[RMDB]
RNA sequence: GGGAACGACUCGAGUAGAGUCGAAAAGAGCAUAGUUCAGAGGCACGCCAUAUCCGUAUGUGCCUUCUGAACUAAGCUAUAUGGAUAUGGCAUCCAAUACGCUUCUAGCGUAUUGGAUUGAACUAUAGAUAGUAGAGUCAUUCGUGACUUUGCUAUCAAAAGAAACAACAACAACAAC
Reactivity to DMS in 0.01 (KOAc 150mM, MgCl2 10mM, bicine 150mM(pH8.5), 24C), signal-to-noise 9, nucleotides 027 to 126: g000a030g010c020a100u000a010g000u000u000c020a000g010a060g000g010c020a020c020g010c210c120a110u030a090u050c200c200g000u020a070u020g010u000g000c010c000u020u020c010u000g000a010a010c010u000a000a020g010c010u000a040u030a060u030g010g010a140u020a030u010g000g010c030a040u000c000c000a000a010u000a000c000g010c000u000u050c260u040a060g020c000g000u000a000u000u000g000g000a000u010u010g010a060a090c030u000a050u010a080
Reactivity to 2A3 in 0.01 (KOAc 150mM, MgCl2 10mM, bicine 150mM(pH8.5), 24C), signal-to-noise 9, nucleotides 027 to 126: g140a000g000c030a040u030a020g000u000u000c010a000g000a020g020g010c020a010c030g040c030c020a100u090a120u200c080c070g110u150a140u250g030u020g000c000c000u090u040c010u010g010a010a010c010u000a010a000g000c000u010a010u020a040u200g110g010a030u040a040u100g020g000c010a000u000c000c000a000a000u000a000c000g000c000u140u120c120u300a040g000c000g000u000a000u000u000g000g000a000u000u020g000a010a000c000u010a010u030a130